[RMDB]
RNA sequence: GGGAACGACUCGAGUAGAGUCGAAAAAGUUACAUUUGUUGCUAGAAUAAGCGUGAAUCAUAGUACACCGAGGGUCCACAUCUUCGUGUUGCUGUUCGCAGCAAUAUUCGGAUAACCCUCUCGGUGUAACUGCAAGAACCUUCGGGUUCUUGCAGUUAAAAGAAACAACAACAACAAC
Reactivity to DMS in 0.01 (KOAc 150mM, MgCl2 10mM, bicine 150mM(pH8.5), 24C), signal-to-noise 2, nucleotides 027 to 126: a070g020u010u030a090c130a120u030u000u010g010u000u020g030c020u020a110g010a080a060u020a090a090g000c070g020u030g000a040a090u010c120a070u020a040g030u000a000c000a000c000c000g010a010g000g000g000u020c070c110a110c240a020u000c000u000u000c180g000u000g010u000u000g000c020u020g000u000u020c210g000c010a020g000c000a000a000u000a010u000u030c090g000g000a010u000a070a180c240c040c020u000c040u000c000g010g000u000g000u000
Reactivity to 2A3 in 0.01 (KOAc 150mM, MgCl2 10mM, bicine 150mM(pH8.5), 24C), signal-to-noise 1, nucleotides 027 to 126: a000g150u150u220a050c050a060u120u070u270g070u000u000g000c000u060a090g180a300a170u300a270a000g030c050g050u120g000a050a030u090c090a090u140a070g000u000a030c000a000c000c000g110a000g040g000g000u060c000c110a030c010a010u000c000u000u000c040g000u000g000u000u000g000c000u000g100u000u030c300g010c100a010g000c000a000a000u030a030u000u050c020g000g000a000u010a010a020c000c000c000u010c000u000c000g000g000u000g000u000

The record gives the reactivity of an RNA of 177 nucleotides to DMS and 2A3. DMS adducts were read by reverse transcription with MarathonRT. For 2A3, 317 sequencing reads were counted.